[RMDB]
RNA sequence: GGGAACGACUCGAGUAGAGUCGAAAAGAACACGUGUACGUACGAGUACACGUGAGUUCGUGUGAGAGAGUGUGUACUCACGUGAUCACGAGAUCGAGUGUGUUCUCUCGUGUACGAGAACACGUGUGAGAUCUCUCUCGAGAGUGUUCGUGAGAACCCGGCUAAGGAUAUUCGUAUCCUUAGCCGGAAAAGAAACAACAACAACAAC
Reactivity to DMS in 0.01 (KOAc 150mM, MgCl2 10mM, bicine 150mM(pH8.5), 24C), signal-to-noise 1, nucleotides 027 to 156: g030a140a120c000a020c000g000u000g060u000a000c030g030u010a100c160g000a170g040u010a050c000a010c000g020u000g000a050g020u000u010c010g000u000g010u030g020a140g000a080g000a130g010u010g010u030g000u000a160c000u000c000a100c020g060u000g020a100u000c030a050c160g010a180g030a060u000c030g010a160g000u000g000u010g020u000u010c010u010c030u000c050g000u000g030u000a090c110g010a080g010a070a050c000a000c000g040u000g000u000g010a100g010a160u010c020u010c040u010c000u010c020g020a250g010a080g030u010g010u020u000c050g020u000g000a250g010a000a200c120
Reactivity to 2A3 in 0.01 (KOAc 150mM, MgCl2 10mM, bicine 150mM(pH8.5), 24C), signal-to-noise 3, nucleotides 027 to 156: g020a030a000c000a000c000g010u000g020u000a000c030g040u070a050c150g070a070g040u030a000c020a000c000g000u000g000a000g000u000u040c030g000u060g010u150g060a040g000a020g000a010g020u080g000u080g040u160a080c000u000c010a000c010g010u050g010a040u100c010a000c180g110a110g010a050u150c060g000a070g060u150g030u020g050u220u000c000u000c000u000c080g020u030g100u090a090c130g010a040g050a150a000c010a000c000g000u040g000u010g040a050g000a040u020c000u010c000u030c010u000c010g080a100g000a050g080u120g010u100u120c080g030u050g060a080g030a040a030c010
Chemical mapping of a 207-nucleotide RNA with DMS and 2A3. Conditions: 150 mM KOAc, 10 mM MgCl2 and 150 mM bicine (pH 8.5), 24 C. For DMS, 1,846 sequencing reads were counted. It was measured as part of the RMDB library OK3TST. Reactivities are rounded to 0.1 and cut off at 0 and 3.